[RMDB]
RNA sequence: GGGAACGACUCGAGUAGAGUCGAAAACACACGCCAGUUCAUCAUGACCGUUACAUUUUGAGGUUAUAAAGUUCAAUUGCAACACAUAGACUAAGGUUUACAUGGUGAAGCGAUGGUGAAAAACAAACCUCUUGUGGCUUUUCGAAGCCACAAGAGGAAAAGAAACAACAACAACAAC
Reactivity to 2A3 in 0.01 (KOAc 150mM, MgCl2 10mM, bicine 150mM(pH8.5), 24C), signal-to-noise 2, nucleotides 027 to 126: c100a000c000a000c000g000c020c000a050g060u000u020c000a030u000c000a000u020g010a110c010c060g020u040u060a060c010a270u060u130u090u130g060a100g030g020u050u170a160u080a080a120a130g080u000u010c080a040a040u040u090g070c080a040a000c000a030c000a050u170a030g090a020c030u050a150a000g050g080u010u020u080a000c000a000u000g020g020u040g000a000a030g090c010g080a070u010g000g040u000g030a020a100a000a080a000c060a000a000a010
Reactivity to DMS in 0.01 (KOAc 150mM, MgCl2 10mM, bicine 150mM(pH8.5), 24C), signal-to-noise 1, nucleotides 027 to 126: c030a050c150a100c000g060c000c040a130g000u000u000c000a000u000c000a000u000g030a250c160c300g060u000u000a060c050a000u000u000u000u050g040a000g050g000u030u010a140u050a000a090a140g000u000u000c050a000a000u000u000g000c010a060a000c100a140c120a190u000a000g080a000c030u000a300a110g000g000u000u000u000a000c080a010u000g000g050u000g000a030a040g000c190g000a060u000g050g010u030g000a010a060a100a080a080c110a000a040a150
Source: RMDB library RFM100, as collected in RNAgym. Chemical mapping of a 177-nucleotide RNA with 2A3 and DMS. For 2A3, 1,377 sequencing reads were counted. The DMS profile rests on 917 reads.